[RMDB]
RNA sequence: GGGAACGACUCGAGUAGAGUCGAAAAACAGUAUGGGAAGUACACAUGCUGUUUAAUCCCACAAUAAAAACCCUGAGUACUUACAGGUACACUGAGGUGCAAAUCAGUGUUUUAGCCGCUUCUUUGGAGAAGGAAUAAACUUCGGUUUAUUCCUUCUAAAAGAAACAACAACAACAAC
Reactivity to 2A3 in 0.01 (KOAc 150mM, MgCl2 10mM, bicine 150mM(pH8.5), 24C), signal-to-noise 2, nucleotides 027 to 126: a020c000a000g010u000a010u020g030g020g070a020a020g050u040a000c040a010c000a030u010g010c000u030g010u020u000u020a010a000u030c020c010c000a010c050a030a090u300a030a120a010a010a010c000c000c000u010g000a020g030u010a030c000u010u010a010c000a020g000g000u000a000c000a010c010u010g010a000g090g080u300g210c100a030a080a020u030c000a000g000u010g070u010u000u070u130a030g040c070c040g070c120u040u040c000u080u140u050g080g170
Reactivity to DMS in 0.01 (KOAc 150mM, MgCl2 10mM, bicine 150mM(pH8.5), 24C), signal-to-noise 4, nucleotides 027 to 126: a010c010a010g010u000a000u000g000g010g000a020a000g010u000a020c010a040c000a000u000g000c000u000g010u010u000u000a130a130u000c010c000c010a150c290a100a070u030a050a050a000a020a070c190c000c000u000g000a190g010u000a000c000u010u010a180c020a020g010g020u010a020c000a010c010u000g000a010g000g010u020g020c260a060a110a120u000c000a010g010u000g000u000u010u010u010a110g030c140c110g010c080u000u000c030u000u000u000g010g030